[RMDB]
RNA sequence: GGGAACGACUCGAGUAGAGUCGAAAAGAUAUGGAAUGUCAGUGACAUGCUUUAGGGUCGGAAACGACCCUAAAGCAACAGCACUACAUUCCUAAGUCAAAGUGGCGAAUCUUCGGAUUCGCCACAACUAGAUUUAGGACUUCGGUCCUAAAUCUAGAAAAGAAACAACAACAACAAC
Reactivity to DMS in 0.01 (KOAc 150mM, MgCl2 10mM, bicine 150mM(pH8.5), 24C), signal-to-noise 2, nucleotides 027 to 126: g000a030u000a050u030g000g010a010a000u010g010u010c300a020g010u010g030a020c050a210u030g020c000u000u000u000a010g010g000g010u000c020g030g000a020a010a020c000g000a010c000c000c000u000a010a000a000g020c000a020a030c270a090g020c020a010c000u000a000c010a010u000u000c000c000u000a010a070g010u010c010a080a140a170g040u000g000g010c010g010a040a020u000c000u000u010c250g010g000a020u010u000c000g020c000c010a000c000a020a100
Reactivity to 2A3 in 0.01 (KOAc 150mM, MgCl2 10mM, bicine 150mM(pH8.5), 24C), signal-to-noise 1, nucleotides 027 to 126: g010a000u030a000u040g010g020a010a000u040g050u120c250a040g000u000g040a040c090a200u300g010c030u000u000u000a010g010g070g000u000c010g000g020a050a000a010c000g040a010c020c010c020u000a020a010a020g000c010a020a020c040a000g080c000a000c000u010a000c000a000u000u020c010c000u000a000a000g020u020c000a000a190a220g020u000g000g000c030g040a010a020u000c010u070u180c300g080g030a000u000u000c000g000c000c000a000c000a000a000